[RMDB]
RNA sequence: GGGAACGACUCGAGUAGAGUCGAAAAGAUAUGGAGAUGGUCCAGACAUGACGGUGGGUCGGAAACGACCCAUACGUCAACAGCUGGCCAUCUCCUAAGUCAAACAGACGACCUUCGGGUCGUCUGAGAUAAGGUACGAGUUCGCUCGUACCUUAUCAAAAGAAACAACAACAACAAC
Reactivity to DMS in 0.01 (KOAc 150mM, MgCl2 10mM, bicine 150mM(pH8.5), 24C), signal-to-noise 5, nucleotides 027 to 126: g010a020u000a070u010g000g000a020g010a020u000g000g010u020c010c020a020g000a050c160a170u010g000a010c000g000g020u000g000g000g010u000c000g000g000a010a020a050c000g010a010c000c000c000a000u000a010c000g020u000c000a060a050c230a140g000c010u000g000g000c020c010a010u000c000u000c000c000u000a000a040g000u000c010a200a170a300c020a000g000a020c000g000a020c000c000u000u020c250g020g010g010u000c000g000u000c000u000g010a020
Reactivity to 2A3 in 0.01 (KOAc 150mM, MgCl2 10mM, bicine 150mM(pH8.5), 24C), signal-to-noise 3, nucleotides 027 to 126: g000a000u010a010u040g010g000a000g000a000u020g010g060u300c240c010a010g010a050c210a230u300g000a000c000g030g000u010g000g030g000u010c010g000g020a060a020a000c010g010a010c020c070c010a000u070a070c010g000u010c000a010a010c060a020g000c010u000g000g000c010c000a000u000c000u010c000c000u000a000a000g000u010c000a010a020a060c000a010g000a000c010g000a000c010c000u050u100c300g200g020g000u000c020g000u000c000u000g000a010
Structure probing data (DMS and 2A3) for a 177-nucleotide construct. It was measured as part of the RMDB library TTRDES. 2A3 adducts were read by reverse transcription with SuperScript II with manganese. DMS adducts were read by reverse transcription with MarathonRT.